Chemical mapping of a 177-nucleotide RNA with 2A3 and DMS.
Values are in units of 0.01, from 0 to 300, in steps of 10.
It was measured as part of the RMDB library OK2TST.
For DMS, 10,677 sequencing reads were counted.
For 2A3 the reverse transcriptase was SuperScript II with manganese.

[RMDB]
RNA sequence: GGGAACGACUCGAGUAGAGUCGAAAAAACUGCCCCAGCAGACCGGUGACCAUGCUGGCAUCAAGGAUCGGGUUUACAGCAACAGCAUCUAUGAGCUUCUGGAGAACGGGCAGCGGGUAAGUGUGCACACUAUUCACCUAUUCGUAGGUGAAUAGUGAAAAGAAACAACAACAACAAC
Reactivity to 2A3 in 0.01 (KOAc 150mM, MgCl2 10mM, bicine 150mM(pH8.5), 24C), signal-to-noise 4, nucleotides 027 to 126: a000a010c010u050g000c010c010c000c000a000g020c010a000g020a040c000c040g090g030u040g040a100c040c000a050u140g020c050u060g070g010c010a090u060c040a060a070g060g010a070u070c050g040g020g030u010u040u110a110c060a050g020c030a030a040c010a060g030c010a040u020c020u130a120u140g030a020g020c020u050u040c030u070g060g010a080g010a130a020c010g000g030g000c000a000g030c040g000g020g000u050a100a020g040u040g030u080g070c030a010
Reactivity to DMS in 0.01 (KOAc 150mM, MgCl2 10mM, bicine 150mM(pH8.5), 24C), signal-to-noise 8, nucleotides 027 to 126: a060a060c070u010g010c040c020c020c040a200g020c040a060g010a140c070c040g010g010u010g000a130c060c050a080u000g010c060u000g010g010c060a050u010c070a060a250g000g000a050u000c080g000g010g000u000u010u010a090c130a070g010c090a060a060c100a060g010c060a050u010c070u000a120u010g000a120g000c040u000u000c050u000g010g000a080g010a090a080c110g000g000g010c050a050g010c070g010g000g000u000a020a060g010u000g020u000g020c120a220